[RMDB]
Chemical mapping of a 177-nucleotide RNA with 2A3. The 2A3 profile rests on 436 reads. Reactivities are given for positions 27 through 126.

RNA sequence: GGGAACGACUCGAGUAGAGUCGAAAAAGCUACACCACAAGGAGUGGAUUGUGCGGCUUAAUUUGACUCAACGCGAGGAAACUUACCAGGGCCAAGUAUUGUGUAGAAACGAGCAAUACAGGAGUGGGGUGUCGUCGGUAUUCGUACCGACGACACCAAAAGAAACAACAACAACAAC
Reactivity to 2A3 in 0.01 (KOAc 150mM, MgCl2 10mM, bicine 150mM(pH8.5), 24C), signal-to-noise 2, nucleotides 027 to 126: a000g000c010u010a000c000a020c000c020a010c000a000a200g250g080a160g130u040g040g020a100u100u250g010u000g150c130g000g010c000u000u080a050a050u120u060u000g000a000c000u010c000a000a000c010g000c000g030a000g000g110a020a020a020c010u090u160a090c020c000a050g150g100g000c000c010a150a000g000u000a000u000u020g020u040g040u160a000g300a160a300a110c030g020a060g020c000a000a000u000a000c020a050g030g040a070g030u110g020g010
It was measured as part of the RMDB library RFM100.